[RMDB]
RNA sequence: GGGAACGACUCGAGUAGAGUCGAAAAGCAGUUAAAAAGCUCGUAGUUGAACCUUGGGCCUGGCUGGCCGGUCCGCCUAACCGCGUGUACUGGUCCGGCCGGGCCUUUCCUUCUGGGGAGCCGCAUGCUAAAUCUAUUCGUUCGCGAAUAGAUUUAGAAAAGAAACAACAACAACAAC
Reactivity to DMS in 0.01 (KOAc 150mM, MgCl2 10mM, bicine 150mM(pH8.5), 24C), signal-to-noise 1, nucleotides 027 to 126: g000c020a080g000u000u000a050a070a160a190a130g000c010u000c020g030u010a090g000u010u010g010a080a260c020c030u000u000g020g000g000c000c010u000g010g000c000u000g020g010c030c020g000g020u000c020c020g000c000c020u020a090a090c300c300g000c020g000u010g030u000a010c000u000g010g000u000c020c020g020g000c010c020g020g000g010c010c000u000u010u000c010c000u000u010c070u000g030g010g010g000a050g040c050c100g050c080a090u000g000